[RMDB]
RNA sequence: GGGAACGACUCGAGUAGAGUCGAAAACCCUUGACAAGUUGCGUGAUUAUUUAGCUGACUAUGACGUAGCAGUCACUGCCGGCCCAUUCAUGGAUAAUGCUAUUAAUGUUGGUGGUACAGGAUUACAGACGAGUAACCUUCGGGUUACUCAAAAGAAACAACAACAACAAC
Reactivity to 2A3 in 0.01 (KOAc 150mM, MgCl2 10mM, bicine 150mM(pH8.5), 24C), signal-to-noise 5, nucleotides 027 to 129: c020c000c000u010u110g100a060c010a060a000g030u050u040g080c030g000u030g150a120u020u190a050u080u240u140a140g050c070u070g030a060c040u050a040u230g030a050c050g040u020a010g000c030a030g020u060c030a010c170u010g000c000c000g030g000c030c000c020a020u060u100c000a100u050g010g010a030u050a150a000u170g030c040u110a060u170u020a070a030u070g090u120u300g040g030u030g010g010u030a060c010a000g000g000a020u010u000a040c010a000g060a030c060
Reactivity to DMS in 0.01 (KOAc 150mM, MgCl2 10mM, bicine 150mM(pH8.5), 24C), signal-to-noise 6, nucleotides 027 to 129: c000c000c000u000u000g030a110c120a080a160g030u020u020g010c120g000u000g030a050u050u020a090u020u050u030a000g020c100u050g040a130c110u000a100u040g020a070c100g030u040a070g010c020a060g020u000c000a090c200u070g040c020c040g000g000c000c040c080a000u000u000c150a040u010g050g010a040u050a140a180u040g020c060u000a050u050u030a000a000u030g010u030u070g040g030u030g010g040u040a100c110a060g000g010a080u040u040a040c090a090g040a150c220
This 170-nucleotide RNA was probed chemically with 2A3 and DMS. For 2A3 the reverse transcriptase was SuperScript II with manganese. The RNA was probed in 150 mM KOAc, 10 mM MgCl2 and 150 mM bicine (pH 8.5) at 24 C.